[RMDB]
RNA sequence: GGGAACGACUCGAGUAGAGUCGAAAAGAAAGAAAGAAAGAAGCCGGCUCUGCUAGUUUCACGGCAACCACGUUGAACUUACAACGAAAGAAGCUCGCACUCAACUUCAACGGCUUAACGAGUGCAAAAAAGAAGUAUCACUUCGGUGAUACUUCAAGACGAUAUAUGACUUCGGUCAUAUAUCGUCAAAAGAAACAACAACAACAAC
Reactivity to 2A3 in 0.01 (KOAc 150mM, MgCl2 10mM, bicine 150mM(pH8.5), 24C), signal-to-noise 2, nucleotides 027 to 156: g080a030a100a000g000a040a100a020g020a020a160a010g090a050a000g090c130c000g020g010c050u020c050u060g030c010u020a020g090u050u050u120c150a050c020g060g030c050a040a040c010c000a000c020g000u000u040g030a060a060c040u100u270a100c120a030a000c030g040a030a000a190g020a030a040g050c140u190c150g000c040a000c000u020c000a030a150c020u070u020c010a050a000c080g020g030c050u080u000a010a010c010g010a000g000u000g000c000a020a020a020a020a020a020g000a000a000g010u000a000u000c000a000c000u000u050c090g020g010u010g000a000u000a000c000u000u000c000a000a010
Record summary
Chemical mapping of a 207-nucleotide RNA with 2A3. Conditions: 150 mM KOAc, 10 mM MgCl2 and 150 mM bicine (pH 8.5), 24 C. For 2A3, 1,043 sequencing reads were counted. Values cover nucleotides 27 to 156. 2A3 is a SHAPE reagent: it acylates the 2'-hydroxyl of flexible nucleotides of all four kinds. It was measured as part of the RMDB library M2RFPK.